Description
The record gives the reactivity of an RNA of 177 nucleotides to 2A3 and DMS. The data come from the RNA Mapping Database (RMDB), library OK2TRN. For DMS the reverse transcriptase was MarathonRT. Conditions: 150 mM KOAc, 10 mM MgCl2 and 150 mM bicine (pH 8.5), 24 C.
RNA sequence: GGGAACGACUCGAGUAGAGUCGAAAACGCGGCCUAGUGACACGCGUACUAGAUGCGCGCACGGCCGACAGGCCCUGGAUCGCGCCGUACGUGAUCGUGAUCGGCGCAGGCGCACUAGAGCGCAUGAGCACUCUCACUCCUUCGGGAGUGAGAGUGCAAAAGAAACAACAACAACAAC
Reactivity to 2A3 in 0.01 (KOAc 150mM, MgCl2 10mM, bicine 150mM(pH8.5), 24C), signal-to-noise 1, nucleotides 027 to 126: c040g050c000g040g160c000c000u070a100g030u040g060a020c050a010c140g010c000g040u000a030c010u020a100g250a280u040g030c000g010c000g000c020a000c050g000g000c010c000g030a030c020a050g100g000c030c000c000u060g060g080a130u110c090g030c000g000c010c000g000u040a000c000g050u210g270a230u260c060g050u000g020a080u230c010g000g000c020g000c020a030g090g000c010g040c000a020c030u110a050g020a040g060c000g000c030a040u090g050a030
Reactivity to DMS in 0.01 (KOAc 150mM, MgCl2 10mM, bicine 150mM(pH8.5), 24C), signal-to-noise 1, nucleotides 027 to 126: c160g010c060g010g000c000c040u010a080g040u000g000a130c090a150c030g000c000g040u020a100c040u000a100g020a210u000g020c040g030c000g040c010a030c240g020g010c000c000g000a040c300a030g030g010c000c000c030u000g010g010a090u000c100g010c030g000c000c000g000u000a080c000g000u010g000a100u010c040g000u000g000a160u010c020g010g020c010g010c010a120g010g010c010g000c040a090c030u000a040g040a300g010c000g040c030a030u000g010a180